[RMDB]
RNA sequence: GGGAACGACUCGAGUAGAGUCGAAAAAGCACCAUCUGCGUAGGCUUGAGGUUUAAGACUUGCGUCGCCUACGGUCUUGGAUAGCCCCCGCCAGGCAGGGACCCCAAUCUUUAAAACGGAGCGGCAAGCGCAUAACACCAUUCGUGGUGUUAUGCGCAAAAGAAACAACAACAACAAC
Reactivity to 2A3 in 0.01 (KOAc 150mM, MgCl2 10mM, bicine 150mM(pH8.5), 24C), signal-to-noise 3, nucleotides 027 to 126: a000g080c050a040c020c010a050u100c050u180g050c000g040u030a040g010g060c040u070u110g060a040g040g100u040u070u220a130a050g050a070c000u050u130g050c080g100u060c080g020c010c000u010a020c020g010g000u010c010u000u030g000g030a040u070a140g000c000c010c000c000c000g010c040c000a010g000g020c000a010g010g110g070a110c050c010c000c000a030a060u010c040u020u130u150a060a100a010a040c030g070g010a050g040c000g010g010c010a010a080
Reactivity to DMS in 0.01 (KOAc 150mM, MgCl2 10mM, bicine 150mM(pH8.5), 24C), signal-to-noise 2, nucleotides 027 to 126: a070g050c070a250c030c000a080u010c010u020g020c050g040u020a040g010g000c020u000u010g010a120g000g020u000u000u040a090a060g020a070c020u000u050g000c070g000u020c110g010c000c000u000a060c020g000g020u010c020u000u000g000g000a090u010a170g010c030c000c010c050c050g000c060c040a050g030g020c050a040g000g030g000a070c050c010c010c050a030a050u030c100u000u030u000a100a040a060a100c200g000g000a060g010c070g000g000c070a050a150

This 177-nucleotide RNA was probed chemically with 2A3 and DMS. The RNA was probed in 150 mM KOAc, 10 mM MgCl2 and 150 mM bicine (pH 8.5) at 24 C.